Source: RMDB library OK3TST, as collected in RNAgym. An RNA of 207 nucleotides, treated with DMS and 2A3 and read out base by base. DMS adducts were read by reverse transcription with MarathonRT. 2A3 adducts were read by reverse transcription with SuperScript II with manganese. For DMS, 4,921 sequencing reads were counted. The reactions ran in a buffer of 150 mM KOAc, 10 mM MgCl2 and 150 mM bicine (pH 8.5), at 24 C.
RNA sequence: GGGAACGACUCGAGUAGAGUCGAAAACGGAAACCAUCCUCCAUCCGAAACGUACGAGCACUACCAUUCCAUCCGAAACGUACGCCAAGUGUUACGAGAAGUAGCGCAUAGGAUGGGAAAGCAUGCUGGCCUCACCUGUGACGCGCUCUGUAGACAGACCAUGUCAGAAUUUCGAUUCUGACAUGGUAAAAGAAACAACAACAACAAC
Reactivity to DMS in 0.01 (KOAc 150mM, MgCl2 10mM, bicine 150mM(pH8.5), 24C), signal-to-noise 3, nucleotides 027 to 156: c060g020g000a110a100a110c030c030a120u000c020c020u010c040c040a100u010c020c030g000a130a060a040c040g020u000a030c060g000a120g040c000a090c020u000a080c030c040a160u010u000c000c020a080u000c010c030g020a060a120a180c050g020u000a020c030g000c030c020a100a150g030u010g040u000u000a030c030g030a190g000a130a110g010u000a040g010c030g000c040a130u000a190g020g020a060u000g020g010g010a040a050a110g000c050a080u010g020c050u000g000g000c030c020u000c060a080c020c020u000g020u010g020a120c070g030c000g050c010u010c040u010g000u010a060g010a150c050a170g020
Reactivity to 2A3 in 0.01 (KOAc 150mM, MgCl2 10mM, bicine 150mM(pH8.5), 24C), signal-to-noise 4, nucleotides 027 to 156: c040g040g020a090a000a000c050c010a090u050c000c030u000c020c010a060u000c030c020g060a040a040a020c020g020u040a000c020g030a030g040c030a030c140u110a100c100c030a120u120u070c030c010a060u020c030c030g050a080a070a060c030g050u040a010c020g030c040c020a100a030g040u020g030u100u050a010c020g010a030g050a300a020g030u040a040g020c000g000c030a010u030a020g010g050a050u040g020g000g010a030a000a010g020c020a030u120g030c020u070g070g010c000c010u020c010a040c010c000u040g030u050g060a050c030g020c000g010c030u010c040u030g020u020a010g060a110c050a020g060